[RMDB]
RNA sequence: GGGAACGACUCGAGUAGAGUCGAAAACAGUCAAAGGCUAUCAAACCGGCAACUUCGACGACUACAAAAACAUGCUCAAGCACUACAACACGAAGCACUACAAAUUCAACUUCCUAAGCGACGAUAGCUUCAUUCUGACGAACAAGCACGACCCAACCGUCAACACCCAAUUCGUUGGGUGUUGACGAAAAGAAACAACAACAACAAC
Reactivity to 2A3 in 0.01 (KOAc 150mM, MgCl2 10mM, bicine 150mM(pH8.5), 24C), signal-to-noise 1, nucleotides 027 to 156: c050a030g000u000c030a080a000a050g000g080c030u030a030u040c050a090a000a000c030c100g070g010c080a050a090c020u110u110c020g030a010c090g080a060c010u080a150c130a000a140a000a090a000c030a080u070g050c000u120c180a010a020g100c060a000c070u170a030c140a200a000c000a000c120g080a040a010g020c080a000c010u150a020c070a100a070a130u150u140c000a060a000c040u000u010c000c000u190a170a000g040c030g080a070c030g000a100u040a080g030c000u000u040c020a120u120u060c040u050g030a030c020g110a070a050c020a010a010g030c050a030c030g080a050c000c000c030a050a070c050